[RMDB]
RNA sequence: GGGAACGACUCGAGUAGAGUCGAAAAGAUAUGGAUCCCUGGCACAGCUUUGAUCUAGGAUCGGAAACGAUCCUAGGGAGCUGGCCAUGGGAUCCUAAGUCAAAAGGAGACGCUUCGGCGUCUCCAAGAGACAUUACAUGUUCGCAUGUAAUGUCUCAAAAGAAACAACAACAACAAC
Reactivity to DMS in 0.01 (KOAc 150mM, MgCl2 10mM, bicine 150mM(pH8.5), 24C), signal-to-noise 2, nucleotides 027 to 126: g010a010u010a160u010g010g010a000u000c010c000c000u000g010g030c010a300c190a030g010c000u000u010u030g010a020u030c000u000a010g020g010a010u000c000g000g000a030a050a090c000g010a010u000c000c000u000a000g000g000g000a000g050c010u000g020g000c000c000a010u000g010g010g000a000u000c000c000u000a000a060g000u000c010a110a080a200a190g000g010a000g000a010c000g030c000u000u020c180g040g000c000g000u000c000u010c000c010a010a040
Reactivity to 2A3 in 0.01 (KOAc 150mM, MgCl2 10mM, bicine 150mM(pH8.5), 24C), signal-to-noise 4, nucleotides 027 to 126: g010a010u020a020u070g010g000a010u000c000c000c030u010g030g000c060a170c090a300g000c000u300u300u030g020a000u000c000u000a000g010g000a010u000c020g000g010a040a010a010c000g000a010u000c000c000u010a000g000g000g000a000g020c030u060g100g000c010c000a000u040g000g000g000a000u010c000c000u000a000a010g010u010c010a030a030a120a240g000g000a030g010a000c020g000c050u090u170c300g210g000c000g000u020c000u000c010c000a000a010